[RMDB]
Structure probing data (DMS and 2A3) for a 207-nucleotide construct. For DMS, 5,860 sequencing reads were counted. For 2A3 the reverse transcriptase was SuperScript II with manganese. DMS (dimethyl sulfate) methylates the pairing face of unpaired adenines and cytosines.
RNA sequence: GGGAACGACUCGAGUAGAGUCGAAAAGUAUAGCAUGACUGGCAAUGCGUAUACGAUGAAUCAGCCAGUAAAGAAUCCGUUGUGCGAAAGCACUUCGGUAAUGCAUAAUCGGUUCGAGUACAGCCCGGUACGAGAACCGUUGUUAGUACGGGCCAGAAUUAUUUAAUCAGUUCGCUGAUUAAAUAAUAAAAGAAACAACAACAACAAC
Reactivity to DMS in 0.01 (KOAc 150mM, MgCl2 10mM, bicine 150mM(pH8.5), 24C), signal-to-noise 3, nucleotides 027 to 156: g000u000a050u000a080g010c010a040u000g010a120c010u000g000g000c020a250a050u000g010c040g050u000a080u000a080c080g020a170u010g000a090a070u000c070a160g010c000c030a080g020u000a050a080a130g010a240a110u000c000c010g020u000u000g030u000g020c010g030a170a110a280g030c000a010c010u000u000c000g030g020u010a010a030u020g010c030a150u020a120a090u010c040g050g040u000u000c000g030a300g030u010a020c010a020g020c000c020c000g010g000u000a020c010g000a300g010a030a010c000c010g020u000u010g000u010u000a100g010u000a120c050g000g010g030c060c030a110g000a210
Reactivity to 2A3 in 0.01 (KOAc 150mM, MgCl2 10mM, bicine 150mM(pH8.5), 24C), signal-to-noise 1, nucleotides 027 to 156: g000u010a030u060a050g010c000a000u000g060a070c010u010g000g000c020a040a020u010g020c030g030u070a030u010a060c090g060a100u240g110a020a080u110c010a030g050c020c000a010g020u060a030a110a000g040a030a050u030c010c000g020u000u000g000u000g010c000g060a010a020a020g000c000a000c000u000u000c010g000g010u030a050a030u100g060c050a090u100a110a110u190c050g000g010u000u000c000g000a000g020u010a000c000a030g020c020c000c010g020g000u000a000c020g000a000g000a010a000c000c000g000u000u020g000u010u040a090g010u030a050c060g030g030g030c010c050a030g050a120

DMS adducts were read by reverse transcription with MarathonRT. The data come from the RNA Mapping Database (RMDB), library OK3TST.